Source: RMDB library M2PK90, as collected in RNAgym. The record gives the reactivity of an RNA of 177 nucleotides to DMS.
RNA sequence: GGGAACGACUCGAGUAGAGUCGAAAAAAAAACGAUGAUCCAGUUGUAGCGGUGAUUAUCGUAGCUAUCAGCUGGAUCAUCAAUGGGUGGCGACACCGAACGAUAACCGCAGACAUGCUGAAAAAAACUAAAUAGCCCAGUUCGCUGGGCUAUUUAGAAAAGAAACAACAACAACAAC
Reactivity to DMS in 0.01 (KOAc 150mM, MgCl2 10mM, bicine 150mM(pH8.5), 24C), signal-to-noise 1, nucleotides 027 to 126: a060a070a000a030a030c200g000a020u000g030a000u000c000c000a000g030u000u000g000u000a010g060c000g000g050u050g010a190u000u070a060u000c060g000u030a150g030c020u000a000u000c000a050g000c000u000g010g010a000u000c000a000u000c000a090a030u000g000g000g030u000g000g020c300g010a160c020a000c000c020g000a070a100c170g010a210u000a090a100c060c060g000c000a030g000a170c120a030u000g000c020u000g000a000a020a040a220a110a000a110